[RMDB]
RNA sequence: GGGAACGACUCGAGUAGAGUCGAAAAGGAGCUCGAUGCUAUGUGAUAACUACACUCUAAGUUAUCACUACUUAGAGUGCCCUGAGUAUAGUUAUGAGAGGGUGAUCGUAACUUAUAGCAUCGAGAAGAUAGGAGUCAUAUUCGUGUGAUUUCUAUCAAAAGAAACAACAACAACAAC
Reactivity to DMS in 0.01 (KOAc 150mM, MgCl2 10mM, bicine 150mM(pH8.5), 24C), signal-to-noise 9, nucleotides 027 to 126: g010g010a130g010c010u000c000g010a010u000g000c000u000a010u010g010u010g010a050u010a040a050c030u000a190c050a050c030u000c030u010a020a020g010u000u000a070u040c190a100c200u010a010c010u000u000a010g000a040g000u000g000c060c030c020u010g000a130g010u010a050u000a020g010u010u000a010u000g010a070g010a140g010g000g010u020g000a110u000c050g010u000a040a020c010u000u020a010u000a000g000c000a000u000c000g000a010g010a040a060
Reactivity to 2A3 in 0.01 (KOAc 150mM, MgCl2 10mM, bicine 150mM(pH8.5), 24C), signal-to-noise 9, nucleotides 027 to 126: g140g010a060g030c000u000c000g000a000u000g000c000u000a000u020g070u030g070a040u030a070a020c010u040a010c030a020c020u020c010u020a020a000g000u000u020a150u140c040a030c030u010a000c000u000u000a000g010a000g010u010g030c020c000c000u010g010a010g010u050a040u040a040g040u050u010a020u040g030a030g010a020g060g170g040u110g070a060u040c030g010u030a000a020c000u040u050a000u000a000g000c000a000u000c000g000a000g000a000a010